About this RNA: An RNA of 177 nucleotides, treated with 2A3 and DMS and read out base by base. The data come from the RNA Mapping Database (RMDB), library M2PK90.
RNA sequence: GGGAACGACUCGAGUAGAGUCGAAAAACAGAGCGAAGGGGGGACGGAGAAGGCUAUGUUGGCCGGGCGACGGUUGUCCCGGUUUAAGCGUGUAGGCUGGUUUUCCACGCAAAUCCGGAAAAAGAAACAUAAUUGAUCCAUUCGUGGAUCAAUUAUGAAAAGAAACAACAACAACAAC
Reactivity to 2A3 in 0.01 (KOAc 150mM, MgCl2 10mM, bicine 150mM(pH8.5), 24C), signal-to-noise 1, nucleotides 027 to 126: a000c000a000g030a010g020c050g040a060a050g040g000g010g000g010g000a010c010g030g000a080g020a090a020g040g030c040u050a060u170g090u140u070g120g030c000c000g040g010g000c030g020a100c080g080g030u100u100g060u110c000c020c000g000g000u020u050u030a040a010g000c020g010u030g020u040a020g090g000c040u040g010g000u030u000u050u080c020c000a020c040g020c000a040a000a090u090c030c030g000g050a010a020a010a010a050g100a020a040a010
Reactivity to DMS in 0.01 (KOAc 150mM, MgCl2 10mM, bicine 150mM(pH8.5), 24C), signal-to-noise 4, nucleotides 027 to 126: a110c070a080g000a050g020c030g010a080a100g000g010g000g000g010g000a090c050g000g010a080g000a110a070g010g000c040u010a070u010g010u000u000g010g010c010c000g010g000g010c300g000a060c110g000g000u000u000g000u000c040c000c000g010g000u000u010u000a050a110g000c010g020u000g010u000a050g010g010c070u000g010g000u000u000u000u000c040c010a050c090g000c050a030a080a070u010c020c020g000g010a050a050a050a090a070g000a110a070a150
Annotation: Values cover nucleotides 27 to 126. The reactions ran in a buffer of 150 mM KOAc, 10 mM MgCl2 and 150 mM bicine (pH 8.5), at 24 C. For DMS, 5,273 sequencing reads were counted.